[RMDB]
RNA sequence: GGGAACGACUCGAGUAGAGUCGAAAAGAAAAAGCGGAAGUGGCGAAAUCGGUAGACGCAGUUGAUCAAAGAUCAACCGUAGAAAUACGUGCUGGUUCGACUCCAGCCUUCCGCACCGAAAAAAAAACGAUAUUAUUCACUUCGGUGAAUAAUAUCGAAAAGAAACAACAACAACAAC
Reactivity to 2A3 in 0.01 (KOAc 150mM, MgCl2 10mM, bicine 150mM(pH8.5), 24C), signal-to-noise 1, nucleotides 027 to 126: g050a000a050a010a000a000g010c020g020g010a020a000g020u030g010g000c030g000a020a030a000u250c090g080g080u150a000g000a030c010g000c010a000g000u010u000g010a030u010c150a250a270a140g030a000u000c000a010a010c010c020g000u010a010g020a020a020a010u030a010c020g000u000g000c010u000g000g010u010u020c010g000a000c000u000c000c000a000g000c020c000u040u080c000c000g020c010a000c000c010g030a080a010a050a000a000a000a000a010a020
Reactivity to DMS in 0.01 (KOAc 150mM, MgCl2 10mM, bicine 150mM(pH8.5), 24C), signal-to-noise 2, nucleotides 027 to 126: g010a060a150a110a150a120g030c020g010g000a030a020g010u000g010g000c000g010a010a060a010u000c110g030g020u020a030g000a270c000g000c010a170g010u010u030g020a000u000c030a100a110a200g010a010u000c010a010a000c020c000g000u000a010g000a100a050a100u000a000c000g010u000g000c020u010g000g000u010u000c010g000a300c030u000c000c010a000g020c010c020u000u000c000c010g000c000a130c070c010g000a000a000a020a060a020a000a080a110a220